[RMDB]
Chemical mapping of a 207-nucleotide RNA with 2A3.
RNA sequence: GGGAACGACUCGAGUAGAGUCGAAAAAGUGGACGAUACAUUACACCGAGCAAUUAAAUUACUGUCCACGCUCGGGCAUUAUUCUGGCGAGAGCCAGUUCACAGACAGCUAGCGAAAGGAAGGACCUAGCAGGAAGGAAGGAGCUAGCGCUAGGACAGAGCGCGGACUGAUUCGUCAGUCCGCGCUCAAAAGAAACAACAACAACAAC
Reactivity to 2A3 in 0.01 (KOAc 150mM, MgCl2 10mM, bicine 150mM(pH8.5), 24C), signal-to-noise 1, nucleotides 027 to 156: a010g000u000g000g000a010c030g090a080u120a170c130a080u070u070a050c090a070c060c020g000a000g000c010a050a100u150u180a090a120a100u110u140a170c080u190g040u050c020c000a000c040g000c000u010c010g000g000g020c030a040u150u180a050u120u220c010u040g000g080c020g030a040g000a010g090c000c000a000g000u080u120c070a060c000a050g090a020c010a030g010c070u040a010g000c070g090a130a000a000g020g020a030a030g010g080a010c010c000u000a000g020c040a030g060g000a030a030g000g030a020a030g000g080a000g000c010u020a010g000c020g000c010u080a030g010g030a010c070a020